[RMDB]
RNA sequence: GGGAACGACUCGAGUAGAGUCGAAAAUUAACCCUAAGUAUACACUGGUCACAUCCCAAGUCUUGCGCGCUUCGGCAGUCAAAUCUACCCUUCGCCUUCUACGUCUGCGUCAUCGUGUGUUUGCCUUAGUCUGAACUCAAUUCGUUGAGUUCAGACUAAAAGAAACAACAACAACAAC
Reactivity to 2A3 in 0.01 (KOAc 150mM, MgCl2 10mM, bicine 150mM(pH8.5), 24C), signal-to-noise 2, nucleotides 027 to 126: u110u030a060a140c030c010c010u030a160a000g040u040a080u050a050c060a030c010u020g010g010u020c060a000c020a110u070c050c000c070a030a020g050u040c090u100u100g030c080g000c000g020c080u070u010c050g070g010c030a020g070u050c030a000a000a090u080c000u070a170c010c000c000u020u040c030g090c020c000u060u000c030u050a060c020g020u000c040u020g060c000g030u010c020a100u070c040g060u030g010u030g000u090u000u080g050c000c000u010u020
Reactivity to DMS in 0.01 (KOAc 150mM, MgCl2 10mM, bicine 150mM(pH8.5), 24C), signal-to-noise 1, nucleotides 027 to 126: u000u050a150a300c000c000c060u000a000a240g000u060a160u000a060c000a100c090u000g020g000u000c000a160c060a120u000c000c000c000a100a070g000u050c010u040u010g000c010g050c060g000c000u000u000c090g000g060c000a070g010u000c180a020a080a090u010c040u020a000c030c030c000u000u000c150g000c040c000u030u040c000u000a170c200g000u000c000u010g000c080g020u010c030a100u000c040g030u000g000u050g000u010u000u000g020c000c000u050u000